Structure probing data (2A3 and DMS) for a 177-nucleotide construct.
Reactivities are given for positions 27 through 126.
2A3 adducts were read by reverse transcription with SuperScript II with manganese.
For 2A3, 1,069 sequencing reads were counted.
[RMDB]
RNA sequence: GGGAACGACUCGAGUAGAGUCGAAAACUACUAUGCCGUCUGCUGACUUCUGAUAAAUCACUCUAGCGAUUACUCGAUAAAGCGCGUCUAAAACUAACGCUUGUUUACUGCUAUUUCGCUCGCUGUACUGACGAUACUGUUUCGACAGUAUCGUCAGAAAAGAAACAACAACAACAAC
Reactivity to 2A3 in 0.01 (KOAc 150mM, MgCl2 10mM, bicine 150mM(pH8.5), 24C), signal-to-noise 1, nucleotides 027 to 126: c000u080a030c010u010a030u090g020c010c020g040u040c040u050g000c040u030g050a100c000u030u000c000u070g040a110u090a050a100a020u040c010a000c030u080c030u030a030g030c040g030a000u000u090a030c020u030c080g110a090u100a060a120a000g020c010g000c000g080u000c100u110a100a110a050a040c050u150a060a000c010g010c000u010u120g000u070u160u060a040c000u010g060c010u040a060u030u080u040c040g000c020u050c030g050c070u060g040u070a070
Reactivity to DMS in 0.01 (KOAc 150mM, MgCl2 10mM, bicine 150mM(pH8.5), 24C), signal-to-noise 2, nucleotides 027 to 126: c050u000a050c120u010a080u010g010c020c020g000u000c040u000g020c050u000g010a110c050u000u000c030u000g000a070u010a030a120a110u000c030a080c080u010c100u010a020g000c030g010a070u000u010a070c060u000c080g000a050u000a030a020a050g000c020g040c090g010u000c070u010a100a100a100a110c170u010a080a120c060g000c040u000u000g000u000u000u010a130c120u020g000c060u000a080u000u010u000c030g050c040u000c070g000c120u000g000u010a140